[RMDB]
RNA sequence: GGGAACGACUCGAGUAGAGUCGAAAACAGUUACAGAGCGGAAUGCGUAGCAUUAGAGAUAGGACUGCAACGGCUGCUGAAAUGGCUUCCGGCAUACAGAAGCACACCGAGCAGGUUGUCCAUCUUCCGUUCCCCUCACAUUCGUGUGAGGGGAACGAAAAGAAACAACAACAACAAC
Reactivity to DMS in 0.01 (KOAc 150mM, MgCl2 10mM, bicine 150mM(pH8.5), 24C), signal-to-noise 1, nucleotides 027 to 126: c000a000g000u010u030a040c140a080g040a070g040c100g020g010a080a000u000g000c010g040u030a110g000c000a010u030u000a080g000a050g010a100u000a060g000g020a050c000u000g010c020a040a110c050g050g010c300u000g000c030u070g010a070a140a270u020g000g000c000u000u040c010c060g000g000c270a070u010a070c100a010g000a060a030g050c000a040c020a030c110c150g000a060g000c010a050g040g000u000u000g000u000c020c000a050u010c000u000u000c240
Reactivity to 2A3 in 0.01 (KOAc 150mM, MgCl2 10mM, bicine 150mM(pH8.5), 24C), signal-to-noise 1, nucleotides 027 to 126: c020a000g020u180u160a080c070a030g050a000g030c020g070g110a000a160u150g020c050g080u090a030g000c030a100u080u110a080g030a000g030a140u030a040g070g010a010c000u030g050c010a020a040c080g050g000c010u020g010c000u070g060a030a060a210u090g050g000c000u000u000c000c050g020g000c060a060u110a110c080a130g040a090a030g060c020a030c000a020c120c010g000a010g000c020a090g090g000u020u000g030u010c020c000a020u000c000u060u040c010